The record gives the reactivity of an RNA of 207 nucleotides to 2A3.
RNA sequence: GGGAACGACUCGAGUAGAGUCGAAAACCUCACUACAUUUUACUGUUCCUAAAGAAUUUGUGGCAGGUACAGUAAAACGUAUUGCAAGGUUUAUCAGUUCCUAUAAACAGGUAAAUAACAAUAUAUGAAAAGCAAAGACUGUUCGCAGUCUUUGCAACAGCCAAGAAUUCUUCGGAAUUCUUGGCUGAAAAGAAACAACAACAACAAC
Reactivity to 2A3 in 0.01 (KOAc 150mM, MgCl2 10mM, bicine 150mM(pH8.5), 24C), signal-to-noise 1, nucleotides 027 to 156: c000c000u000c000a010c010u000a000c000a040u000u010u000u000a000c000u000g000u000u080c020c000u170a180a130a050g120a240a260u200u300u260g120u040g080g040c110a000g030g030u000a000c000a000g000u000a000a000a000a000c000g000u000a000u000u010g020c060a110a020g130g000u000u050u050a080u120c030a040g000u000u000c000c000u050a080u270a130a140a000c060a040g070g030u100a270a010a010u290a270a030c020a110a000u140a000u050a040u290g120a150a010a050a000g000c000a000a000a000g000a010c010u040g010u050u090c170g000c090a000g030u000c010u000u000u000g020c000a000a000
The RNA was probed in 150 mM KOAc, 10 mM MgCl2 and 150 mM bicine (pH 8.5) at 24 C. For 2A3 the reverse transcriptase was SuperScript II with manganese.